[RMDB]
RNA sequence: GGGAACGACUCGAGUAGAGUCGAAAAGAUAUGGAGCGUGUAGAGCAACAGCUACCAUUCGGAAACGAAUGAGUAGACAUGCUCUCACGCUCCUAAGUCAAAAGACCCAUUAGUUCGCUAAUGGGUCCGCUACUAUGGACUUCGGUCCAUAGUAGCGAAAAGAAACAACAACAACAAC
Reactivity to 2A3 in 0.01 (KOAc 150mM, MgCl2 10mM, bicine 150mM(pH8.5), 24C), signal-to-noise 2, nucleotides 027 to 126: g000a010u010a000u000g000g000a010g020c000g010u070g210u300a020g030a000g010c180a110a170c060a300g000c000u010a000c000c000a010u000u010c000g000g020a010a010a000c010g000a010a010u020g010a050g080u000a000g010a000c010a080u300g000c010u000c010u000c010a000c000g000c000u000c000c000u000a010a000g010u010c000a000a000a010a090g020a000c020c000c000a000u000u000a020g080u060u130c300g000c210u010a000a010u000g010g020g010u000c000
Reactivity to DMS in 0.01 (KOAc 150mM, MgCl2 10mM, bicine 150mM(pH8.5), 24C), signal-to-noise 3, nucleotides 027 to 126: g000a010u000a030u020g000g000a030g020c000g040u000g000u020a000g000a020g020c000a160a090c300a150g020c000u000a020c000c000a020u000u000c000g000g000a020a010a020c000g010a010a000u000g010a190g020u000a010g010a010c070a160u020g010c000u000c010u000c000a010c000g010c000u000c000c000u000a010a030g000u000c010a100a130a170a200g000a010c000c000c000a020u010u010a000g010u000u010c300g040c000u010a020a010u000g000g010g000u000c010
Source: RMDB library TTRDES, as collected in RNAgym. Chemical mapping of a 177-nucleotide RNA with 2A3 and DMS. For 2A3 the reverse transcriptase was SuperScript II with manganese. Reactivities are given for positions 27 through 126. The RNA was probed in 150 mM KOAc, 10 mM MgCl2 and 150 mM bicine (pH 8.5) at 24 C.